[RMDB]
RNA sequence: GGGAACGACUCGAGUAGAGUCGAAAAAUUGAUACAACAGGCCAUCCUAUCUAUCAGGUUAGAUCCAGGUCUAGGGAAGGAUACCACGCUCCACAUCUCAUCUAACAAUGUGACAUUGAUGGGUGCACAGUCGACAGAAUUUCGAUUCUGUCGACUGAAAAGAAACAACAACAACAAC
Reactivity to DMS in 0.01 (KOAc 150mM, MgCl2 10mM, bicine 150mM(pH8.5), 24C), signal-to-noise 2, nucleotides 027 to 126: a120u000u000g010a120u020a080c200a090a100c140a090g010g000c060c050a060u020c030c000u000a070u000c090u030a080u030c050a090g000g000u000u000a050g030a020u000c070c080a010g020g000u000c030u000a090g030g000g010a040a140g040g020a090u000a080c170c090a070c080g000c030u000c020c000a040c170a030u000c020u000c060a050u000c050u000a010a150c120a060a060u020g010u000g050a070c070a060u010u010g040a050u010g000g010g000u010g020c070a200
Reactivity to 2A3 in 0.01 (KOAc 150mM, MgCl2 10mM, bicine 150mM(pH8.5), 24C), signal-to-noise 1, nucleotides 027 to 126: a010u080u080g030a030u070a100c000a040a050c010a100g080g000c050c010a020u040c020c020u090a080u040c020u030a140u080c060a000g080g080u040u040a040g050a070u000c030c020a050g070g070u010c100u110a020g070g020g040a050a090g000g010a010u060a120c030c030a030c060g000c020u060c000c000a020c010a050u050c040u020c020a030u000c010u010a010a120c060a140a110u100g020u140g060a030c010a040u000u100g050a040u020g030g080g000u040g000c040a010